The record gives the reactivity of an RNA of 177 nucleotides to 2A3.
[RMDB]
RNA sequence: GGGAACGACUCGAGUAGAGUCGAAAAUAUACCUUAGAUGUCGGCACAACUCCCGACUCGCGGUGAGCGAUACAGCGUAGCGCGAGCUUCGCAGCUGCUGUGCGGACGCCUAGCAAAAGCUAGGCAGCGCCGUCAGCGUGUUCGCACGCUGACGGCGAAAAGAAACAACAACAACAAC
Reactivity to 2A3 in 0.01 (KOAc 150mM, MgCl2 10mM, bicine 150mM(pH8.5), 24C), signal-to-noise 1, nucleotides 027 to 126: u240a020u110a010c020c000u030u050a130g010a170u220g030u000c010g050g070c060a000c020a000a250c020u000c000c020c000g020a000c000u000c000g000c030g040g090u040g010a000g000c050g260a230u090a300c050a080g040c030g150u230a000g030c000g000c010g000a000g030c000u000u030c000g000c030a000g010c100u010g010c000u000g000u060g000c000g090g040a000c030g000c000c000u030a030g000c000a130a130a130a130g000c000u000a000g050g010c010a020g000
Notes:
Conditions: 150 mM KOAc, 10 mM MgCl2 and 150 mM bicine (pH 8.5), 24 C.